[RMDB]
RNA sequence: GGGAACGACUCGAGUAGAGUCGAAAAGGCUAAACGAAAUGUGUCCGAUAGUAGCAUCACUCCACAGACUCUUUUGAAGGGUCUAAACGUCGCUAGAGCGUCAGGCAACAAGACAUAUCGCUAUCGCUAACUGAGCCUACUUCGGUAGGCUCAGUUAAAAAGAAACAACAACAACAAC
Reactivity to 2A3 in 0.01 (KOAc 150mM, MgCl2 10mM, bicine 150mM(pH8.5), 24C), signal-to-noise 1, nucleotides 027 to 126: g000g050c110u150a070a100a000c050g030a030a110a180u210g020u030g010u040c040c050g020a020u050a120g080u040a000g000c020a010u080c000a010c050u000c000c000a090c010a080g010a020c010u030c090u010u100u160u220g130a050a010g050g010g000u040c060u010a040a040a010c040g070u030c010g040c060u030a010g070a020g100c030g040u090c050a000g050g000c010a020a030c010a130a000g040a010c000a020u050a030u050c060g070c070u050a010u080c000g000c140
Reactivity to DMS in 0.01 (KOAc 150mM, MgCl2 10mM, bicine 150mM(pH8.5), 24C), signal-to-noise 1, nucleotides 027 to 126: g040g010c050u000a090a050a220c090g000a030a070a090u000g000u030g010u010c010c080g010a090u000a020g010u000a040g030c030a040u010c070a020c090u000c020c130a140c300a010g020a040c000u000c010u000u000u030u010g010a090a030g000g000g010u000c000u000a010a070a070c140g030u000c060g020c030u000a120g000a080g030c030g000u010c040a050g000g000c020a050a080c020a080a040g020a030c080a050u000a100u000c060g000c100u020a070u000c090g030c060

Chemical mapping of a 177-nucleotide RNA with 2A3 and DMS. The reactions ran in a buffer of 150 mM KOAc, 10 mM MgCl2 and 150 mM bicine (pH 8.5), at 24 C. DMS adducts were read by reverse transcription with MarathonRT. 2A3 adducts were read by reverse transcription with SuperScript II with manganese.